Overview:
An RNA of 207 nucleotides, treated with 2A3 and DMS and read out base by base.
RNA sequence: GGGAACGACUCGAGUAGAGUCGAAAAGAUAGAAGGAACAGUAAUGAGGAGCCCUGCAGGUCUUAUUCCACUCUUUCUAGCUGCAAGCUUUCUUCCUGGUGGCAGAUGACAUCAUGGAUUCAUCCCUUACCCGCCGGGGACAGAUCUGCUGGUAUCAGUUCUAAGAGGGAUUCGUCCCUCUUAGAACAAAAGAAACAACAACAACAAC
Reactivity to 2A3 in 0.01 (KOAc 150mM, MgCl2 10mM, bicine 150mM(pH8.5), 24C), signal-to-noise 2, nucleotides 027 to 156: g110a040u180a060g040a030a020g090g010a060a060c010a090g050u160a140a180u080g030a080g040g010a010g010c020c000c000u030g000c050a010g000g030u030c020u060u110a120u050u030c020c020a040c040u060c020u090u300u070c040u050a010g020c010u070g050c090a100a050g010c030u080u100u050c020u060u100c010c000u030g010g010u020g020g000c020a040g020a130u050g010a040c030a090u150c080a140u190g130g000a030u130u020c010a020u010c070c030c000u030u110a060c010c000c000g020c000c020g040g030g000g010a080c090a010g010a000u010c000u010g000c020u030g000g000u050a130u140c060a070
Reactivity to DMS in 0.01 (KOAc 150mM, MgCl2 10mM, bicine 150mM(pH8.5), 24C), signal-to-noise 1, nucleotides 027 to 156: g010a130u000a120g000a120a100g000g020a100a110c050a070g020u000a040a050u000g010a040g010g010a140g010c070c020c020u010g030c040a080g000g000u000c000u000u010a070u000u000c030c030a110c040u000c000u000u000u010c010u020a130g020c030u000g040c060a090a220g000c040u000u000u000c020u000u010c020c060u010g020g040u010g030g080c050a070g000a120u000g010a010c040a060u000c070a110u010g010g000a110u000u000c020a080u000c000c020c080u010u000a080c100c010c030g060c060c020g000g000g000g000a050c040a070g000a040u010c030u000g030c010u020g000g000u010a080u000c040a150
The 2A3 profile rests on 605 reads. The RNA was probed in 150 mM KOAc, 10 mM MgCl2 and 150 mM bicine (pH 8.5) at 24 C. For DMS the reverse transcriptase was MarathonRT.